[RMDB]
RNA sequence: GGGAACGACUCGAGUAGAGUCGAAAAGAUAUGGAUCACUCAAGCUUUUGACGGCUGGUCGGAAACGACCAACCGAUAAGCUUGGUGAUCCUAAGUCAAAAGGGUAUAAAGUUCGCUUUAUACCCAACCUUAAUUAAGAGUUCGCUCUUAAUUAAGGAAAAGAAACAACAACAACAAC
Reactivity to DMS in 0.01 (KOAc 150mM, MgCl2 10mM, bicine 150mM(pH8.5), 24C), signal-to-noise 6, nucleotides 027 to 126: g010a010u000a230u010g000g000a010u000c000a000c000u010c030a000a010g010c000u000u000u010u000g020a220c060g010g010c020u000g010g000u000c000g020g000a050a040a100c010g010a010c000c000a000a000c000c000g010a090u000a030a040g010c000u000u000g010g010u000g000a000u000c000c000u000a000a060g010u000c020a060a080a120a120g000g000g010u000a000u000a000a010a010g000u000u010c250g010c000u000u000u000a000u000a000c000c000c000a010a010
Reactivity to 2A3 in 0.01 (KOAc 150mM, MgCl2 10mM, bicine 150mM(pH8.5), 24C), signal-to-noise 7, nucleotides 027 to 126: g010a000u020a020u080g000g010a000u010c000a020c030u300c080a020a000g010c020u150u280u300u300g150a040c010g000g000c000u000g000g000u000c000g000g000a020a020a010c000g000a000c000c000a000a000c000c000g050a050u080a290a010g000c000u000u000g000g000u000g000a000u000c000c000u000a000a000g000u000c010a000a030a100a200g000g000g010u010a000u010a000a030a010g030u050u120c190g070c180u000u010u000a010u000a000c000c000c000a000a010
The record gives the reactivity of an RNA of 177 nucleotides to DMS and 2A3. For DMS, 13,765 sequencing reads were counted. The reactions ran in a buffer of 150 mM KOAc, 10 mM MgCl2 and 150 mM bicine (pH 8.5), at 24 C. DMS adducts were read by reverse transcription with MarathonRT.